[RMDB]
RNA sequence: GGGAACGACUCGAGUAGAGUCGAAAAUCGCGUUGGCUGCCUAAUUCAAGGAAUUAGCGUGCCUUCAUGCUAAGGAUUUGAUAUCUGCUAAAACCCGGUGCAUUCAUCAAUGCAGGUUAAGCCAAAGAAACGGCUCACGAAUUCGUUCGUGAGCCAACUAAAAGCCAAUCUUCGGAUUGGCUUUUAGAAAAGAAACAACAACAACAAC
Reactivity to DMS in 0.01 (KOAc 150mM, MgCl2 10mM, bicine 150mM(pH8.5), 24C), signal-to-noise 3, nucleotides 027 to 156: u010c070g010c080g030u000u000g000g020c040u020g040c110c030u000a050a100u000u000c020a090a100g030g020a290a210u000u000a010g020c020g050u000g030c170c070u010u020c010a050u000g010c020u000a060a050g000g020a300u000u000u000g010a120u000a050u000c030u000g010c010u000a110a050a070a120c020c000c060g090g060u010g000c010a060u000u010c050a060u000c070a110a200u000g000c030a050g010g010u010u000a050a110g010c020c020a020a090a140g010a050a120a130c140g060g010c000u000c000a000c000g000a020a050u000u010c260g000u010u000c000g010u000g010a020g010c000c010a010a010
Reactivity to 2A3 in 0.01 (KOAc 150mM, MgCl2 10mM, bicine 150mM(pH8.5), 24C), signal-to-noise 1, nucleotides 027 to 156: u090c040g000c060g080u030u030g010g000c000u030g080c020c010u080a180a140u070u040c040a060a040g050g030a050a040u000u000a000g030c030g030u030g020c050c060u100u220c050a040u040g010c030u020a000a010g010g010a000u000u050u000g010a000u030a050u120c060u060g000c010u030a020a070a060a100c000c000c000g000g030u030g000c010a020u020u100c030a040u070c070a120a030u030g000c010a000g000g010u050u150a030a000g000c020c000a040a020a000g080a030a130a010c160g000g010c000u000c000a000c000g020a020a030u070u110c100g050u060u000c000g000u100g010a000g050c000c000a000a000